Source: RMDB library OK1LIB, as collected in RNAgym. An RNA of 177 nucleotides, treated with 2A3 and read out base by base.
[RMDB]
RNA sequence: GGGAACGACUCGAGUAGAGUCGAAAACUUCGUCUUCCUCAUCGGAAGUGUAACUUUGCUGGUUUGGCUCGCUUACACAAUUUUUGCUCUGCUGCGUGGAAUCAUCAAUUGGGGCAUCCAUGGGGCCACCACCAGCUCCUUUCGAGGAGCUGGUGGUAAAAGAAACAACAACAACAAC
Reactivity to 2A3 in 0.01 (KOAc 150mM, MgCl2 10mM, bicine 150mM(pH8.5), 24C), signal-to-noise 2, nucleotides 027 to 126: c010u160u130c000g020u000c010u070u020c000c030u090c010a180u030c100g170g010a130a040g070u090g010u150a060a000c030u050u150u270g020c030u040g120g260u100u120u290g040g020c000u050c050g020c060u040u080a000c000a010c070a110a210u180u130u000u000u120g040c030u000c020u010g060c020u040g000c000g060u060g040g030a060a060u060c000a020u060c060a100a130u090u110g040g000g000g000c020a020u000c040c010a010u030g000g000g010g000c040c040